[RMDB]
RNA sequence: GGGAACGACUCGAGUAGAGUCGAAAAGAUAUGGAUACAUAUCAACCGAGUGUCGGAAACGACAUGGCGGUUUCAACGUGUGAUCCUAAGUCAAACUGAUCUAGAGUGUUCGCACUCUAGAUCAGAACUAAGGGGUAUUCUUCGGAAUACCCCUUAGAAAAGAAACAACAACAACAAC
Reactivity to 2A3 in 0.01 (KOAc 150mM, MgCl2 10mM, bicine 150mM(pH8.5), 24C), signal-to-noise 1, nucleotides 027 to 126: g040a000u040a040u210g060g000a000u050a060c000a000u040a040u050c110a050a010c010c000g020a030g020u000g000u000c000g080g000a150a090a130c000g050a000c000a000u040g300g170c010g010g060u020u040u120c140a090a040c060g020u000g050u120g020a030u050c000c020u040a130a000g010u050c130a100a060a090c050u010g000a010u000c000u000a020g020a050g010u040g040u040u230c300g090c070a010c030u010c000u000a000g000a000u010c030a000g010a000a010
Reactivity to DMS in 0.01 (KOAc 150mM, MgCl2 10mM, bicine 150mM(pH8.5), 24C), signal-to-noise 4, nucleotides 027 to 126: g020a030u000a300u010g000g000a030u010a030c010a020u000a080u000c170a030a020c000c000g010a300g000u000g000u000c000g000g000a040a060a190c000g000a000c000a010u010g010g020c000g000g000u010u000u010c230a050a050c140g000u010g010u010g010a000u000c000c000u010a070a130g020u000c030a060a110a230c010u000g000a010u000c000u000a010g000a010g000u000g010u000u010c230g010c010a010c000u000c000u000a000g000a000u000c000a000g010a040a150

Structure probing data (2A3 and DMS) for a 177-nucleotide construct. Values cover nucleotides 27 to 126. The reactions ran in a buffer of 150 mM KOAc, 10 mM MgCl2 and 150 mM bicine (pH 8.5), at 24 C. It was measured as part of the RMDB library TTRDEL.